Structure probing data (2A3 and DMS) for a 177-nucleotide construct.
Reactivities are rounded to 0.1 and cut off at 0 and 3.
DMS adducts were read by reverse transcription with MarathonRT.
For 2A3, 5,139 sequencing reads were counted.
The DMS profile rests on 2,531 reads.
The data come from the RNA Mapping Database (RMDB), library TTRDES.
The RNA was probed in 150 mM KOAc, 10 mM MgCl2 and 150 mM bicine (pH 8.5) at 24 C.
[RMDB]
RNA sequence: GGGAACGACUCGAGUAGAGUCGAAAAGAUAUGGAGUAUCCACGAACUCGAAGAACUGCUUCGGAAACGAAGCAGGGAGAGUGAGUGGAGUACUCCUAAGUCAAAGGACUUCGUUCGCGAAGUCCAACUGUAGAUCCUUGUUCGCAAGGAUCUACAGAAAAGAAACAACAACAACAAC
Reactivity to 2A3 in 0.01 (KOAc 150mM, MgCl2 10mM, bicine 150mM(pH8.5), 24C), signal-to-noise 2, nucleotides 027 to 126: g030a020u100a080u210g010g000a000g010u000a000u000c010c000a010c030g020a040a020c000u010c050g120a300a080g000a090a030c000u000g010c010u000u010c020g010g000a080a050a050c000g000a010a000g000c000a000g020g020g000a060g000a000g000u030g010a000g010u010g000g010a010g000u000a000c000u020c000c010u010a100a010g070u020c090a170a090a200g010g000a010c000u000u020c010g090u050u140c300g000c020g170a000a000g000u000c010c020a010a000
Reactivity to DMS in 0.01 (KOAc 150mM, MgCl2 10mM, bicine 150mM(pH8.5), 24C), signal-to-noise 3, nucleotides 027 to 126: g010a060u010a300u010g020g000a020g030u000a080u000c000c000a000c000g010a300a020c000u000c000g000a150a140g010a100a170c020u000g000c000u000u000c000g020g000a090a120a260c030g020a000a000g000c000a000g000g000g000a080g030a020g040u000g000a300g020u000g010g000a010g030u000a000c010u010c020c000u000a010a100g010u000c050a100a130a190g010g000a010c000u010u000c000g020u020u010c290g030c040g020a010a030g010u000c010c010a040a030